Chemical mapping of a 177-nucleotide RNA with DMS and 2A3.

[RMDB]
RNA sequence: GGGAACGACUCGAGUAGAGUCGAAAAUGCGCACUUUAGCUAUGCAGCUCUCUCGCAAACUUGACGACGAACUGCGCCACAAAACCAUCGAGCUCGCCGCCUUCUAUGAGCAUCGCUUGCAGGAGGGCCAAAUCAUGCCAUUCGUGGCAUGAUUUGGAAAAGAAACAACAACAACAAC
Reactivity to DMS in 0.01 (KOAc 150mM, MgCl2 10mM, bicine 150mM(pH8.5), 24C), signal-to-noise 2, nucleotides 027 to 126: u000g030c040g020c060a030c130u000u010u010a080g020c060u010a110u030g030c100a040g010c010u000c070u000c030u000c060g000c060a090a090a160c130u000u010g010a050c100g060a080c190g010a010a050c010u000g000c030g030c030c040a030c030a140a050a080a090c100c030a060u010c020g000a060g010c060u000c000g000c030c050g010c010c010u000u010c030u000a060u000g010a030g010c030a070u000c140g000c010u000u000g000c080a050g000g000a060g000g000g000
Reactivity to 2A3 in 0.01 (KOAc 150mM, MgCl2 10mM, bicine 150mM(pH8.5), 24C), signal-to-noise 2, nucleotides 027 to 126: u100g000c050g020c000a020c000u140u120u110a030g000c010u030a050u260g060c020a000g000c020u000c000u000c050u030c030g000c080a120a140a200c100u060u100g070a080c030g010a000c030g040a300a170c050u040g000c000g000c000c010a090c000a020a090a030a040c030c000a030u050c010g050a010g000c040u040c040g100c040c000g040c030c010u080u000c050u070a080u100g050a010g000c030a120u170c170g000c070u030u050g020c000a000g020g020a010g000g040g000
The reactions ran in a buffer of 150 mM KOAc, 10 mM MgCl2 and 150 mM bicine (pH 8.5), at 24 C. For DMS the reverse transcriptase was MarathonRT. The 2A3 profile rests on 1,445 reads.